[RMDB]
RNA sequence: GGGAACGACUCGAGUAGAGUCGAAAAGACUAAGAAACUUCUGAUGAGUUCACAGAAAUUCUAGUGUUUUAGUUGUGAACAGCUGAAUGGGUUCCUGAUCCUUUGAUGCAGUGGGGAGAAAGGCAACUUACAAAUUACACUGAUAGGCAAGUGAAAACUAAUCCAUCCCUUUCGAGGGAUGGAUUAGAAAAGAAACAACAACAACAAC
Reactivity to DMS in 0.01 (KOAc 150mM, MgCl2 10mM, bicine 150mM(pH8.5), 24C), signal-to-noise 1, nucleotides 027 to 156: g030a100c010u000a130a160g030a070a100a040c020u010u010c050u000g010a240u020g000a160g030u000u010c070a200c040a110g000a090a030a030u000u000c020u010a130g020u020g010u000u000u000u030a040g060u020u000g000u000g000a030a060c000a190g040c060u010g000a100a060u000g020g000g000u000u020c020c070u010g020a120u010c040c030u000u010u020g020a050u000g040c040a080g010u000g000g030g030g030a180g020a120a040a040g010g000c070a080a060c080u010u010a110c040a060a130a090u010u000a040c010a090c060u030g010a130u010a100g020g040c020a030a050g040u020g000a090a070a070a250
Reactivity to 2A3 in 0.01 (KOAc 150mM, MgCl2 10mM, bicine 150mM(pH8.5), 24C), signal-to-noise 1, nucleotides 027 to 156: g020a000c020u120a170a040g090a150a120a040c030u030u000c010u010g170a230u130g080a200g140u220u150c030a000c020a000g080a000a000a000u110u040c000u120a010g000u080g080u010u120u050u050a120g000u000u000g000u010g030a060a030c030a020g040c060u050g030a120a070u020g000g040g000u050u000c010c010u020g000a050u000c000c000u000u060u050g090a070u110g050c020a020g050u120g000g050g030g000a030g050a070a100a000g050g000c000a010a010c030u050u030a020c070a000a040a080u090u030a010c030a000c030u020g010a060u070a080g060g080c120a030a010g020u100g150a080a300a000a020
Chemical mapping of a 207-nucleotide RNA with DMS and 2A3.
The 2A3 profile rests on 352 reads.
As a SHAPE reagent, 2A3 marks flexible, mostly unpaired nucleotides at the ribose 2'-OH.
For DMS, 1,368 sequencing reads were counted.
For DMS the reverse transcriptase was MarathonRT.
Source: RMDB library OK3TST, as collected in RNAgym.
Reactivities are given for positions 27 through 156.
The reactions ran in a buffer of 150 mM KOAc, 10 mM MgCl2 and 150 mM bicine (pH 8.5), at 24 C.